[RMDB]
RNA sequence: GGGAACGACUCGAGUAGAGUCGAAAAUACCAGUUAAAUGUAUGACUUGGUAUUGGUGUAAUAAUGCUUCUAGGUUUUCACGAAUAGCAUCAUUUAAUUUUUUACUGCCUAAGCUACCACCCAUAACGCUGCAAGACUACUUCGGUAGUCUUGCAGCAAAAGAAACAACAACAACAAC
Reactivity to 2A3 in 0.01 (KOAc 150mM, MgCl2 10mM, bicine 150mM(pH8.5), 24C), signal-to-noise 1, nucleotides 027 to 126: u000a020c000c000a000g000u040u000a080a260a200u230g160u280a080u160g040a000c000u180u190g020g000u030a020u040u070g100g000u040g000u030a040a170u070a060a000u090g060c030u040u030c020u070a010g060g040u130u010u000u240c070a070c020g040a100a020u070a050g040c030a030u100c000a030u050u080u090a120a170u080u040u000u060u030u170a050c080u060g030c000c000u010a000a000g050c010u000a010c000c000a020c000c000c000a030u050a140a000c040